Structure probing data (DMS and 2A3) for a 207-nucleotide construct. The reactions ran in a buffer of 150 mM KOAc, 10 mM MgCl2 and 150 mM bicine (pH 8.5), at 24 C. Source: RMDB library OK3TST, as collected in RNAgym.

RNA sequence: GGGAACGACUCGAGUAGAGUCGAAAACAGCUUCGCGACGCCAUCCGCACACCCUCACUCAUGGAGCUACUCUCCAUCCACAGACGUGCGACGUAGCUCACUCGCGCAGUGUCGUACCUGAUACGCAUUCCGAGAUGUCCGGUCGGAUGGGAGUGAGCUACGCGCACGCGUUCGCGCGUGCGCGUAGAAAAGAAACAACAACAACAAC
Reactivity to DMS in 0.01 (KOAc 150mM, MgCl2 10mM, bicine 150mM(pH8.5), 24C), signal-to-noise 1, nucleotides 027 to 156: c070a170g050c050u000u000c050g020c040g020a180c020g050c020c000a090u020c030c050g030c030a100c020a090c040c000c060u020c080a070c110u000c060a060u010g000g000a070g020c130u000a120c140u000c000u000c000c010a030u000c020c040a110c080a070g010a040c000g020u000g010c010g000a050c050g020u000a010g000c000u010c000a050c010u000c000g040c020g000c090a220g030u020g000u000c010g020u000a040c060c090u000g000a150u000a030c040g000c010a160u000u000c030c040g010a090g000a100u000g000u000c000c050g030g010u000c070g010g000a030u000g000g060g000a030g040u000g020a000g010
Reactivity to 2A3 in 0.01 (KOAc 150mM, MgCl2 10mM, bicine 150mM(pH8.5), 24C), signal-to-noise 2, nucleotides 027 to 156: c030a010g060c060u080u080c020g000c020g080a050c030g010c050c020a060u000c040c050g020c040a040c010a030c020c020c010u040c060a120c020u080c010a040u040g000g010a000g020c080u090a060c040u040c000u000c080c020a040u080c100c010a120c050a140g110a170c050g030u040g000c020g120a100c040g050u000a010g020c000u020c020a020c000u030c010g100c010g000c120a080g030u020g060u170c020g050u040a150c030c060u120g000a090u010a030c010g020c040a050u110u040c030c030g010a010g050a130u130g060u110c060c040g040g060u040c020g000g030a020u040g040g000g000a000g000u020g000a000g000